[RMDB]
RNA sequence: GGGAACGACUCGAGUAGAGUCGAAAAGCUUAGCCAUUCGUGGCUAAGCGAAGAGCGUACUACGGGAGCUAGUUACUACCCACCUGCUCCCAAAUAGGAGCAGAGGUAAUCUUAGCGAAGAACGUAUCGCAGCCAUGAGCCUUUUCGAAGGCUCAAAGUUCUUAGCUAUAUUCGUAUAGCUAAGAACAAAAGAAACAACAACAACAAC
Reactivity to 2A3 in 0.01 (KOAc 150mM, MgCl2 10mM, bicine 150mM(pH8.5), 24C), signal-to-noise 9, nucleotides 027 to 156: g000c000u000u000a000g010c000c000a040u090u090c290g140u080g000g000c000u000a000a000g000c000g000a040a000g060a020g000c020g020u090a070c080u010a000c060g010g020g010a020g000c000u010a000g020u020u020a030c020u190a240c000c000c010a030c020c000u000g000c000u010c000c030c020a050a070a030u220a020g000g000a000g000c000a000g010a000g000g000u000a010a010u060c100u150u110a010g010c010g080a130a010g010a040a020c000g000u010a010u150c010g010c020a010g060c050c020a090u090g000a000g000c000c000u040u050u060u180c290g150a040a000g000g000c000u000c000a010a010a010
Reactivity to DMS in 0.01 (KOAc 150mM, MgCl2 10mM, bicine 150mM(pH8.5), 24C), signal-to-noise 3, nucleotides 027 to 156: g000c010u000u010a030g030c000c010a090u000u000c300g040u000g020g010c010u000a010a010g000c000g010a030a060g000a170g000c000g030u000a110c080u000a070c010g000g030g000a300g010c010u000a040g010u000u010a020c020u000a030c030c000c020a300c160c000u010g000c000u000c000c000c010a010a100a140u010a070g010g010a040g010c000a010g000a020g020g020u000a010a070u010c130u000u000a030g000c000g010a140a190g000a130a120c050g010u000a040u000c030g020c060a120g000c050c040a140u000g010a030g030c000c000u000u010u000u010c210g020a010a040g010g000c010u010c000a000a030a250